This 207-nucleotide RNA was probed chemically with DMS and 2A3.
The data come from the RNA Mapping Database (RMDB), library OK3TST.
The DMS profile rests on 32,685 reads.
For 2A3 the reverse transcriptase was SuperScript II with manganese.
DMS adducts were read by reverse transcription with MarathonRT.
Values cover nucleotides 27 to 156.
Values are in units of 0.01, from 0 to 300, in steps of 10.
RNA sequence: GGGAACGACUCGAGUAGAGUCGAAAACGCAUGCGAAAGCAUGCGGCUAUGCUAAUGCAUAGUGACCGCCUUUUUGCACACGUCGCGGGCUAUCGCCUUGUUAUUGGUGAUAGCGUUUCCUCAUAGACUUGUUAUUGUCUGUGCAGGUGGUGUGCCACAUCCUAAUAUGGUUCGCCAUAUUAGGAUGAAAAGAAACAACAACAACAAC
Reactivity to DMS in 0.01 (KOAc 150mM, MgCl2 10mM, bicine 150mM(pH8.5), 24C), signal-to-noise 6, nucleotides 027 to 156: c000g030c010a010u000g020c000g000a130a090a230g030c020a000u000g010c000g020g000c000u000a000u000g020c000u000a120a180u000g020c000a020u000a010g030u010g010a180c030c010g010c030c040u000u000u000u000u010g030c010a040c010a050c070g000u000c060g020c080g020g000g020c000u000a010u000c000g020c010c010u000u010g020u000u000a150u010u000g020g030u000g010a030u000a020g010c010g010u000u000u000c010c010u000c070a110u000a080g010a080c040u000u000g030u000u000a100u000u000g010u000c010u000g020u000g010c080a070g020g030u000g020g030u000g020u000g020c010c110a190
Reactivity to 2A3 in 0.01 (KOAc 150mM, MgCl2 10mM, bicine 150mM(pH8.5), 24C), signal-to-noise 7, nucleotides 027 to 156: c000g000c000a000u000g010c010g060a090a000a000g000c000a000u000g000c000g000g000c000u000a000u000g000c030u200a300a090u300g000c000a000u000a000g000u020g090a040c000c010g020c010c020u110u190u040u090u150g000c010a000c000a000c020g180u170c100g020c010g020g020g000c000u000a000u000c010g020c010c010u090u160g180u290u250a250u130u170g000g000u010g000a000u000a000g010c000g000u010u050u000c000c000u000c000a010u010a010g010a000c000u070u100g140u300u250a220u210u180g000u000c000u010g010u010g010c100a010g000g020u070g030g000u000g010u000g000c000c000a010